[RMDB]
RNA sequence: GGGAACGACUCGAGUAGAGUCGAAAACUCACGUACAAUUAUGAUAGCUUAGGUACCUUUGGUCCUACACCGAGAUGUACAUCUAAGCGCUGUUCUUUGUUACCAGCUGAAUGCAGUACCGAACAUACUCAUUAACUCCCUUCGGGGAGUUAAUGAGAAAAGAAACAACAACAACAAC
Reactivity to DMS in 0.01 (KOAc 150mM, MgCl2 10mM, bicine 150mM(pH8.5), 24C), signal-to-noise 2, nucleotides 027 to 126: c000u000c040a100c260g030u010a090c140a060a090u020u010a090u000g010a130u020a040g040c000u010u010a000g010g000u000a000c000c030u000u010u020g020g020u000c280c070u000a100c120a080c020c100g000a030g000a030u020g030u000a050c000a100u040c010u050a070a030g000c090g020c080u020g010u000u000c010u030u000u040g010u000u020a030c020c030a160g030c100u000g000a030a050u030g000c000a090g000u000a030c040c060g010a030a110c130a120u060a060
Reactivity to 2A3 in 0.01 (KOAc 150mM, MgCl2 10mM, bicine 150mM(pH8.5), 24C), signal-to-noise 6, nucleotides 027 to 126: c020u040c030a070c040g090u120a060c040a210a180u240u110a090u270g110a130u120a040g000c020u020u000a000g010g010u020a010c010c000u050u130u300g030g010u160c050c060u100a070c030a000c040c000g020a010g010a050u140g030u030a010c000a070u020c040u020a000a000g000c000g000c020u050g000u090u030c050u020u070u090g050u030u090a060c020c010a020g000c030u070g090a090a030u230g010c010a030g010u020a040c010c060g000a030a050c020a020u120a030
Description: This 177-nucleotide RNA was probed chemically with DMS and 2A3. For DMS the reverse transcriptase was MarathonRT. The DMS profile rests on 2,156 reads. The reactions ran in a buffer of 150 mM KOAc, 10 mM MgCl2 and 150 mM bicine (pH 8.5), at 24 C. Reactivities are given for positions 27 through 126.